The record gives the reactivity of an RNA of 177 nucleotides to 2A3 and DMS.
Conditions: 150 mM KOAc, 10 mM MgCl2 and 150 mM bicine (pH 8.5), 24 C.
For 2A3, 5,229 sequencing reads were counted.
DMS adducts were read by reverse transcription with MarathonRT.
The data come from the RNA Mapping Database (RMDB), library M2PK50.

RNA sequence: GGGAACGACUCGAGUAGAGUCGAAAACUUGCAAGGUUCGCCUUGCAAGAAAUAAAAGCUCACCAACCAACAAAAAUAAGAGCAUGGAUGGAAAAACAAUAAAAACAGCAGUGUUCGCACUGCUGAAGUAUGAGAUUAAGUUCGCUUAAUCUCAUACAAAAGAAACAACAACAACAAC
Reactivity to 2A3 in 0.01 (KOAc 150mM, MgCl2 10mM, bicine 150mM(pH8.5), 24C), signal-to-noise 4, nucleotides 027 to 126: c000u000u010g010c010a000a000g030g010u060u090c170g090c030c000u000u010g000c000a000a000g000a000a030a000u040a000a050a010a010g010c010u030c040a060c020c020a030a050c040c000a020a110c040a050a240a070a080a060u210a190a100g030a010g050c070a050u050g070g010a030u020g010g030a060a100a050a040a030c060a080a120u170a160a060a030a010a000c000a000g000c000a000g000u010g050u090u150c190g020c060a000c000u000g000c000u010g000a000a000
Reactivity to DMS in 0.01 (KOAc 150mM, MgCl2 10mM, bicine 150mM(pH8.5), 24C), signal-to-noise 3, nucleotides 027 to 126: c000u000u000g000c010a010a010g000g040u000u020c200g030c000c000u010u000g010c000a020a000g000a040a080a060u000a070a090a120a120g010c010u000c030a110c070c030a080a070c060c030a050a110c060a010a100a080a110a070u030a080a050g010a060g000c040a040u030g000g020a080u000g010g010a100a100a090a110a030c110a090a100u010a070a020a070a100a190c020a010g010c000a000g020u000g000u000u010c200g000c000a020c000u000g000c010u000g010a010a030